[RMDB]
RNA sequence: GGGAACGACUCGAGUAGAGUCGAAAACGAAGCCCACGUGCGCGGCGUGUCGAUGCGGCGCGCCGAGCUGCGCGCGCCGGAACGGGGCACGUUCGCCGCGCUCGCCUGCCCCGCGUUCAUCGAUCAAACCGUAGGCAUUAUUCGUAAUGCCUACGGUAAAAGAAACAACAACAACAAC
Reactivity to DMS in 0.01 (KOAc 150mM, MgCl2 10mM, bicine 150mM(pH8.5), 24C), signal-to-noise 3, nucleotides 027 to 126: c160g000a130a110g010c010c010c020a220c060g010u000g020c020g020c010g000g030c020g010u010g000u010c030g020a060u000g020c000g000g000c000g010c010g010c000c010g010a070g010c190u010g030c150g020c020g010c020g020c010c000g000g010a070a110c110g000g000g000g000c050a060c110g000u000u010c050g010c020c000g010c000g010c020u010c020g030c130c070u000g000c030c000c010c020g020c080g020u000u010c030a050u000c030g000a080u000c150a090a130